[RMDB]
RNA sequence: GGGAACGACUCGAGUAGAGUCGAAAAUCUGUAGGUGGCCAGGAACAGAAUGGUACACAGCAAAGCAUAGUUGUGGAUAUGCGUGAAUUUCGAAGUGAGCUUCCAUCUCUGAUCCAUCGUCGGGGCACUCUAGGAACGCUUUCGAGCGUUCCUAGAGAAAAGAAACAACAACAACAAC
Reactivity to DMS in 0.01 (KOAc 150mM, MgCl2 10mM, bicine 150mM(pH8.5), 24C), signal-to-noise 1, nucleotides 027 to 126: u000c070u000g010u010a050g000g010u000g000g050c060c030a120g010g000a110a090c060a060g000a000a060u000g010g010u010a110c030a060c000a080g010c070a030a080a080g010c110a090u000a080g020u000u010g010u000g040g000a190u010a060u000g000c000g040u000g000a090a070u010u000u000c100g010a220a090g000u010g010a090g000c150u000u010c000c000a020u000c060u000c010u010g010a190u000c020c020a040u020c150g020u010c050g030g040g010g020c200a030

Chemical mapping of a 177-nucleotide RNA with DMS. The reactions ran in a buffer of 150 mM KOAc, 10 mM MgCl2 and 150 mM bicine (pH 8.5), at 24 C.